The record gives the reactivity of an RNA of 207 nucleotides to 2A3.
[RMDB]
RNA sequence: GGGAACGACUCGAGUAGAGUCGAAAAGUCGCCGACCUCCGACGUCGGUCGAGUGCCGGCGAAUCAGGCUGUGCGGAUCUGGGUCGUCGCGCGCCGGAUCGGCGGUUCCGGUUCGUACACGAUCGACGCCGAAUGGUCGCAGGUCGCGGUGCGCUGCGUCUAAGUGCCAUUUCGAUGGCACUUAGACAAAAGAAACAACAACAACAAC
Reactivity to 2A3 in 0.01 (KOAc 150mM, MgCl2 10mM, bicine 150mM(pH8.5), 24C), signal-to-noise 1, nucleotides 027 to 156: g060u000c000g000c120c000g010a000c000c010u050c050c010g040a020c020g030u060c070g070g010u030c010g000a040g070u110g060c010c010g000g060c090g050a000a050u080c010a040g010g000c010u010g050u110g160c050g040g010a070u030c040u090g000g000g030u030c010g000u000c020g010c000g000c030g020c070c010g000g010a090u050c000g030g020c060g030g000u160u050c000c000g000g000u010u030c020g000u060a050c040a020c000g000a030u040c000g010a000c030g000c020c000g020a100a100u180g080g000u050c010g020c000a010g010g050u070c010g000c040g060g050u050g040c050g000c000u060g060c040
Values are in units of 0.01, from 0 to 300, in steps of 10. The 2A3 profile rests on 1,081 reads.